This 177-nucleotide RNA was probed chemically with DMS.
Values cover nucleotides 27 to 126.
The RNA was probed in 150 mM KOAc, 10 mM MgCl2 and 150 mM bicine (pH 8.5) at 24 C.
The DMS profile rests on 1,070 reads.
Source: RMDB library TTRINS, as collected in RNAgym.

RNA sequence: GGGAACGACUCGAGUAGAGUCGAAAAGAUAUGGAGUACACGGAUUACCUGAGCGUUGAAAAUGCCGAUUAAAUCGGAAACGAUUUAAUCGGCAUUGGAGCUCCUGUAAGAAGUGUACUCCUAAGUCCAGAAUGUAAUGCUUCGGCAUUACAUUCUGAAAAGAAACAACAACAACAAC
Reactivity to DMS in 0.01 (KOAc 150mM, MgCl2 10mM, bicine 150mM(pH8.5), 24C), signal-to-noise 1, nucleotides 027 to 126: g000a100u020a300u010g010g010a020g000u010a000c000a030c010g020g020a300u000u000a040c000c020u000g000a010g040c000g070u000u010g000a140a030a000a010u010g030c010c010g010a010u000u000a000a010a000u000c010g010g010a120a070a150c000g020a000u000u000u000a000a000u010c010g010g010c000a000u000u000g030g010a150g020c000u000c000c010u010g010u010a030a000g000a300a190g000u000g000u000a000c000u000c000c000u020a000a050g010u000c090